[RMDB]
RNA sequence: GGGAACGACUCGAGUAGAGUCGAAAAAUUGAAGAAAUAGUGUAGACGAAGUGUGGAGUCAUCUGGUCAAUUUCAUCUCAUUCAAGAAAUUUGAAAUUGAUGCCAAGACAUUCAAUUCGAAUCCACACCCGUACGUCACUUUCGAGUGACGUACGGGAAAAGAAACAACAACAACAAC
Reactivity to 2A3 in 0.01 (KOAc 150mM, MgCl2 10mM, bicine 150mM(pH8.5), 24C), signal-to-noise 1, nucleotides 027 to 126: a000u300u170g040a200a080g120a110a180a000u120a000g190u160g030u030a000g000a010c070g000a040a230g070u140g000u000g080g060a100g010u000c000a010u040c130u110g000g000u000c000a000a110u020u000u000c000a040u000c060u030c000a190u300u070c100a060a200g050a060a200a030u000u000u030g000a000a000a000u000u000g000a000u030g000c000c000a010a000g040a000c050a230u070u020c000a000a210u070u170c010g010a010a100u000c000c000a000c000a000